[RMDB]
RNA sequence: GGGAACGACUCGAGUAGAGUCGAAAAUCAUCAAGAAGUAGGCUUAGGCCAAUUGCCUGGUGGUGAAAGUAGAGGGAAGGUAGCACUUCGACGCCUCUAAGUACGCUGUGGGAGUAGUGCUUAAAUCAAAAGCACAGCGACUUCGGUCGCUGUGCAACGUUCUGAACUAGUUCGCUAGUUCAGAACGAAAAGAAACAACAACAACAAC
Reactivity to DMS in 0.01 (KOAc 150mM, MgCl2 10mM, bicine 150mM(pH8.5), 24C), signal-to-noise 1, nucleotides 027 to 156: u020c040a060u000c040a060a110g020a030a160g060u010a190g050g050c050u030u010a090g040g060c000c020a040a040u000u010g010c020c010u000g000g040u000g000g020u010g000a080a040a130g010u000a050g000a130g020g040g000a080a090g010g000u000a080g050c090a090c060u000u000c060g000a110c100g000c040c010u050c040u030a040a060g010u000a100c030g040c040u010g000u020g000g020g020a160g010u020a080g030u010g000c000u000u000a090a090a110u010c120a010a060a240a230g000c000a000c000a040g050c010g000a040c020u000u000c300g040g050u000c020g090c010u010g020u020g100c010a010a020
Reactivity to 2A3 in 0.01 (KOAc 150mM, MgCl2 10mM, bicine 150mM(pH8.5), 24C), signal-to-noise 2, nucleotides 027 to 156: u030c000a000u040c020a010a050g070a090a000g080u130a030g030g000c030u100u090a070g090g050c030c010a090a100u060u040g040c000c020u010g000g000u050g010g000u010g040a090a070a000g060u050a010g050a020g030g020g010a040a000g010g020u020a020g030c050a040c050u030u000c030g080a060c050g100c000c010u020c000u010a030a070g020u010a000c050g000c040u020g020u090g030g020g000a080g020u050a010g010u030g000c010u050u050a080a030a040u140c100a110a020a050a000g010c000a000c000a000g010c000g000a000c020u030u040c130g060g000u000c000g000c000u000g000u000g000c000a000a000
Description
An RNA of 207 nucleotides, treated with DMS and 2A3 and read out base by base. The data come from the RNA Mapping Database (RMDB), library M2RFPK. The RNA was probed in 150 mM KOAc, 10 mM MgCl2 and 150 mM bicine (pH 8.5) at 24 C. For 2A3 the reverse transcriptase was SuperScript II with manganese.